Chemical mapping of a 177-nucleotide RNA with DMS and 2A3. Source: RMDB libraries RFM100 and RFMREP, as collected in RNAgym. 2A3 adducts were read by reverse transcription with SuperScript II with manganese. Conditions: 150 mM KOAc, 10 mM MgCl2 and 150 mM bicine (pH 8.5), 24 C.

RNA sequence: GGGAACGACUCGAGUAGAGUCGAAAACAAUCAUAAUGGUCAUCUGGUGGGCUCUAGAAUUCAUCAUUAUGCACACCAAAGUAAAGAUUGUGUGCUCGAAACUUGGAUUCAAUUACUUUUUCGUCAAGACGUAAAGAUUUUUCGAAAUCUUUACGUCAAAAGAAACAACAACAACAAC
Reactivity to DMS in 0.01 (KOAc 150mM, MgCl2 10mM, bicine 150mM(pH8.5), 24C), signal-to-noise 7, nucleotides 027 to 126: c070a090a070u020c060a070u000a090a060u010g000g010u000c060a070u010c050u000g010g030u010g010g000g000c050u010c090u020a070g020a040a040u010u010c060a030u010c090a130u020u020a090u010g000c040a030c010a020c020c120a050a070a120g010u010a090a090a120g010a070u020u000g000u000g020u000g000c000u010c190g010a060a070a080c140u010u000g000g000a030u000u000c040a060a070u020u010a070c090u010u000u010u010u000c050g010u000c200a050a130
Reactivity to 2A3 in 0.01 (KOAc 150mM, MgCl2 10mM, bicine 150mM(pH8.5), 24C), signal-to-noise 8, nucleotides 027 to 126: c010a000a030u110c030a030u060a230a060u100g030g010u020c020a050u000c050u060g100g010u030g010g070g000c000u030c040u100a030g020a020a030u050u040c010a030u000c020a020u080u140a040u210g020c010a010c000a000c030c080a050a020a020g120u140a060a060a050g060a070u080u060g000u000g000u000g000c010u030c080g080a090a070a060c060u030u040g010g020a020u040u030c000a010a060u110u050a110c040u100u120u040u080u130c030g070u050c030a080a070